[RMDB]
RNA sequence: GGGAACGACUCGAGUAGAGUCGAAAAGCGUCCUGGUUCGGGCCGCCCUUGACGAGGCCGAUCGCGUACGGCAACUGGAACGUCGUCGGCGGCUCGCCCGCCUUCGCGGCGACGAAGAUCGGCUUGAGUCAUUAGCCCUGUUCGCAGGGCUAAUGACAAAAGAAACAACAACAACAAC
Reactivity to DMS in 0.01 (KOAc 150mM, MgCl2 10mM, bicine 150mM(pH8.5), 24C), signal-to-noise 1, nucleotides 027 to 126: g020c140g000u000c010c010u000g030g000u030u020c080g000g020g010c000c040g030c010c010c090u000u000g020a020c040g010a170g000g010c000c010g000a060u000c020g000c090g010u000a160c060g000g010c060a080a080c150u000g040g020a070a270c020g010u000c010g060u000c220g000g010c090g000g020c050u000c100g020c280c000c010g000c080c040u000u010c100g030c090g030g000c030g030a080c000g020a090a120g030a090u000c070g030g000c060u000u010g000a300
The record gives the reactivity of an RNA of 177 nucleotides to DMS. Conditions: 150 mM KOAc, 10 mM MgCl2 and 150 mM bicine (pH 8.5), 24 C. It was measured as part of the RMDB library OK2TRN.